Annotation: Chemical mapping of a 177-nucleotide RNA with DMS and 2A3. Reactivities are rounded to 0.1 and cut off at 0 and 3. For DMS, 11,992 sequencing reads were counted.
[RMDB]
RNA sequence: GGGAACGACUCGAGUAGAGUCGAAAAGAUAUGGACUCCUUCCUGCUACCCACCUCCUGAUGUCGGAAACGACAUAGGAGAGGCAGGAGAGGAGUCCUAAGUCAAAAGGGAUCGUUCGCGAUCCCAACAAACUUAAGUGGUUCGCCACUUAAGUUUGAAAAGAAACAACAACAACAAC
Reactivity to DMS in 0.01 (KOAc 150mM, MgCl2 10mM, bicine 150mM(pH8.5), 24C), signal-to-noise 8, nucleotides 027 to 126: g000a040u010a300u010g000g020a010c000u000c000c000u000u000c000c000u000g000c010u000a100c070c070c140a300c120c000u000c000c010u000g000a010u000g000u000c000g020g000a130a070a280c010g010a020c000a010u000a020g010g000a000g000a070g010g020c010a010g000g000a060g010a020g020g000a000g000u000c000c000u000a000a090g000u010c040a110a090a120a170g010g000g000a010u000c000g030u000u010c240g030c010g000a010u000c000c000c010a030a060
Reactivity to 2A3 in 0.01 (KOAc 150mM, MgCl2 10mM, bicine 150mM(pH8.5), 24C), signal-to-noise 5, nucleotides 027 to 126: g010a040u090a070u180g000g000a000c000u000c000c010u000u020c000c010u000g010c010u110a170c070c070c060a070c010c010u040c000c010u240g300a110u020g020u000c000g020g050a100a070a110c010g000a010c010a010u010a010g010g000a010g000a010g000g000c000a010g000g030a040g160a010g000g000a000g000u000c000c010u000a010a010g030u010c040a010a020a070a210g000g010g000a010u010c000g020u120u090c260g000c020g130a000u010c000c000c010a000a000